[RMDB]
Record summary
The record gives the reactivity of an RNA of 177 nucleotides to DMS.
RNA sequence: GGGAACGACUCGAGUAGAGUCGAAAAGAUAUGGACAACCAACGCUGCUUCAGUGUAGGGAGCGUAGAUUCGGAAACGAAUCGAAACGCGACGAUCUACCUGAAGCAGCGUUGGUUGUCCUAAGUCACUUAUAGGCCAAGUUCGCUUGGCCUAUAAGAAAAGAAACAACAACAACAAC
Reactivity to DMS in 0.01 (KOAc 150mM, MgCl2 10mM, bicine 150mM(pH8.5), 24C), signal-to-noise 1, nucleotides 027 to 126: g030a060u000a300u020g010g000a010c000a020a010c000c000a000a020c020g000c000u000g000c020u000u010c010a050g000u000g020u030a000g030g000g010a050g000c000g050u000a280g020a010u000u000c000g010g030a150a060a250c000g010a020a000u010c000g000a080a160a100c000g020c000g030a040c260g000a030u010c000u000a030c000c030u000g040a030a020g060c000a000g000c000g020u000u000g000g000u010u000g020u010c010c000u000a010a070g010u010c010a260

The data come from the RNA Mapping Database (RMDB), library TTRINS.